[RMDB]
Structure probing data (DMS and 2A3) for a 177-nucleotide construct. DMS adducts were read by reverse transcription with MarathonRT. The DMS profile rests on 23,838 reads. Conditions: 150 mM KOAc, 10 mM MgCl2 and 150 mM bicine (pH 8.5), 24 C. For 2A3 the reverse transcriptase was SuperScript II with manganese.

RNA sequence: GGGAACGACUCGAGUAGAGUCGAAAACCCCACGGUGGACCCGGGGGCCAUGGUGGAGAGCAUCUUGCUGGUCAGAGCCAGACUGGGUGGUGUCUGCAGCAAAAGAGGAACUUGCCCAGGCAGUCAGCACUACCAUUAUCUUCGGAUAAUGGUAGUGAAAAGAAACAACAACAACAAC
Reactivity to DMS in 0.01 (KOAc 150mM, MgCl2 10mM, bicine 150mM(pH8.5), 24C), signal-to-noise 9, nucleotides 027 to 126: c050c000c000c070a100c110g010g010u020g010g000a100c070c020c030g010g010g000g000g000c030c040a050u010g010g020u010g010g010a060g000a060g020c060a070u020c050u010u010g000c010u000g000g000u030c030a040g000a300g000c030c020a030g010a130c080u010g000g000g040u010g000g010u010g000u030c010u000g000c050a040g010c030a030a020a110a100g010a130g010g010a090a090c070u010u020g020c000c020c010a100g000g000c060a070g000u010c100a090g000
Reactivity to 2A3 in 0.01 (KOAc 150mM, MgCl2 10mM, bicine 150mM(pH8.5), 24C), signal-to-noise 9, nucleotides 027 to 126: c000c000c010c000a040c040g060g030u100g040g050a070c010c020c020g030g000g010g030g000c020c010a080u090g050g010u060g020g050a080g010a010g060c010a050u030c020u030u050g000c010u020g010g030u120c020a020g010a010g040c010c000a040g060a180c080u120g050g080g020u040g000g000u040g070u030c000u020g020c010a020g000c010a030a040a070a020g070a030g020g030a040a030c030u050u100g030c010c000c010a010g020g000c000a010g050u070c020a010g040